[RMDB]
Notes:
Chemical mapping of a 177-nucleotide RNA with 2A3 and DMS. For DMS the reverse transcriptase was MarathonRT.
RNA sequence: GGGAACGACUCGAGUAGAGUCGAAAAGAUAUGGACUCCUUAGGCAGCAACAGCUCGGAAACGAGACAUGCUGUCUAAUGGAGUCCUAAGUCAAAGGGGAAGUUAGGCUUCGGCCUAACUUCCCCAAGGAUAUUAAGUACUUCGGUACUUAAUAUCCAAAAGAAACAACAACAACAAC
Reactivity to 2A3 in 0.01 (KOAc 150mM, MgCl2 10mM, bicine 150mM(pH8.5), 24C), signal-to-noise 1, nucleotides 027 to 126: g010a000u080a050u180g030g010a020c020u020c000c000u000u000a000g010g010c030a000g030c020a040a150c010a220g020c020u000c000g010g040a060a090a060c010g010a000g040a040c020a040u060g010c000u010g030u010c000u000a010a000u000g000g000a000g000u000c010c000u000a000a000g000u000c000a010a060a060g000g030g000g020a030a000g000u000u000a020g000g020c000u020u100c300g000g010c000c000u000a000a000c000u000u000c000c000c000c000a000a010
Reactivity to DMS in 0.01 (KOAc 150mM, MgCl2 10mM, bicine 150mM(pH8.5), 24C), signal-to-noise 4, nucleotides 027 to 126: g010a050u000a300u010g000g000a020c000u000c000c000u000u000a010g010g000c010a000g000c010a030a090c260a180g010c000u000c000g020g000a090a090a230c010g000a000g000a030c090a230u010g020c000u000g010u010c010u000a000a000u020g020g000a020g010u000c000c000u000a020a040g010u010c030a080a090a170g000g000g000g020a030a010g000u000u000a000g000g010c000u000u020c220g020g000c020c000u000a000a000c000u000u000c000c000c000c000a000a010

About this RNA:
High DMS reactivity at an A or C suggests that its Watson-Crick edge is free.